[RMDB]
RNA sequence: GGGAACGACUCGAGUAGAGUCGAAAAGAUAAUAUCUUAUCAGUUAGAUUCACUGCUAACAAAAUUGUUGGUGGUGCUCCUACAUGGUUUAAUGCGUUGCGUGACUUUACGUUAAAGGGUUAUGUUCACGAAAAAGAUUGUUCGCAAUCUUUUUCGUAAAAGAAACAACAACAACAAC
Reactivity to DMS in 0.01 (KOAc 150mM, MgCl2 10mM, bicine 150mM(pH8.5), 24C), signal-to-noise 3, nucleotides 027 to 126: g000a080u000a030a060u010a300u000c020u010u000a030u000c020a080g000u000u010a030g010a120u000u000c010a000c020u010g000c010u000a010a010c010a050a090a150a090u010u000g030u010u000g000g010u000g010g010u000g010c300u000c010c000u000a010c090a090u010g010g000u000u000u000a110a030u010g020c120g020u000u010g000c060g010u000g000a060c030u000u000u000a020c060g000u000u000a070a070a170g010g000g010u010u000a060u010g020u000u000c070
Reactivity to 2A3 in 0.01 (KOAc 150mM, MgCl2 10mM, bicine 150mM(pH8.5), 24C), signal-to-noise 1, nucleotides 027 to 126: g020a000u110a080a070u090a060u050c020u080u040a020u060c010a010g030u020u070a000g000a060u110u110c000a000c030u040g000c020u010a010a030c000a080a140a100a280u180u070g000u040u000g010g000u020g020g000u000g020c020u030c000c000u010a040c000a090u140g020g070u020u030u100a050a050u090g080c130g130u150u180g020c010g050u040g050a030c020u040u040u000a030c000g040u040u080a100a030a040g000g010g000u030u020a120u140g020u020u020c040